Chemical mapping of a 207-nucleotide RNA with DMS and 2A3.
The DMS profile rests on 4,444 reads.
The RNA was probed in 150 mM KOAc, 10 mM MgCl2 and 150 mM bicine (pH 8.5) at 24 C.
It was measured as part of the RMDB library M2RFOK.
RNA sequence: GGGAACGACUCGAGUAGAGUCGAAAAAACGUUGCAUGAUCGUAAAACAUGCCCGGCUUACCGUGAGCCGCCUUUGAAAGAAAGGUUUACACGGGCUCUGUUGCGUUACGCACGUACCUAACUUGUGAAAACGGCAUCUUGUUCGCAAGAUGCCGAACUUGUUUCUAACGUUCGCGUUAGAAACAAGAAAAGAAACAACAACAACAAC
Reactivity to DMS in 0.01 (KOAc 150mM, MgCl2 10mM, bicine 150mM(pH8.5), 24C), signal-to-noise 2, nucleotides 027 to 156: a090a080c020g000u010u000g010c000a040u010g020a080u000c010g020u010a040a040a030a030c040a030u010g020c010c030c000g010g020c000u000u000a060c040c020g030u010g000a070g020c010c010g020c000c010u000u000u020g010a210a100a300g000a070a020a020g000g030u000u000u010a180c030a020c020g000g000g000c090u000c060u000g010u010u000g030c020g040u000u010a160c110g000c070a070c080g020u020a040c040c030u010a090a110c040u000u000g060u010g000a070a040a120a100c000g000g010c000a020u000c000u000u010g020u000u000c300g000c000a010a010g000a030u000g030c000c010g020a010a000
Reactivity to 2A3 in 0.01 (KOAc 150mM, MgCl2 10mM, bicine 150mM(pH8.5), 24C), signal-to-noise 6, nucleotides 027 to 156: a000a000c010g000u000u010g000c000a000u010g020a040u210c030g060u200a090a060a040a000c000a000u000g000c000c010c000g000g000c000u020u080a110c010c010g020u020g010a000g010c000c010g020c010c000u030u020u010g080a100a050a010g020a000a000a000g010g000u010u040u030a030c000a000c000g000g000g000c030u050c020u110g070u050u020g010c010g030u040u070a060c150g010c020a010c020g030u050a060c000c040u060a110a190c040u100u100g050u050g150a030a040a030a030c000g000g000c000a000u000c000u000u020g030u070u070c180g020c110a000a000g000a000u000g000c000c000g000a000a000